Chemical mapping of a 207-nucleotide RNA with 2A3. Conditions: 150 mM KOAc, 10 mM MgCl2 and 150 mM bicine (pH 8.5), 24 C. It was measured as part of the RMDB library OK3TST. Reactivities are given for positions 27 through 156.
RNA sequence: GGGAACGACUCGAGUAGAGUCGAAAACAUGAGAAACAGGAGCAUACAGAAUGUUAGCUCUGAGAUUGGAAGGCCUAAAUUGCAACCAAUGGAUUCCGUUCGGCCAGAUACUUCAAACCCUCUGACAAUGCCUACCGUAGACUUACUACUCACCAUGGACUCCAGACAGAUUCGUCUGUCUGGAGUCAAAAGAAACAACAACAACAAC
Reactivity to 2A3 in 0.01 (KOAc 150mM, MgCl2 10mM, bicine 150mM(pH8.5), 24C), signal-to-noise 2, nucleotides 027 to 156: c070a080u080g050a010g070a080a110a050c020a040g050g010a000g000c030a040u070a080c010a030g220a130a100u120g120u120u060a030g000c000u010c060u060g040a040g000a090u130u130g030g060a050a040g050g020c010c000u110a160a170a170u120u160g030c040a010a070c000c050a060a030u040g030g000a060u110u040c010c000g000u000u080c020g000g010c030c000a030g000a040u100a040c060u100u090c010a060a110a200c030c020c000u060c060u040g020a030c020a010a180u040g010c000c000u040a090c000c030g020u010a020g010a040c000u000u070a030c010u050a000c000u000c020a070c030c000a050u000g040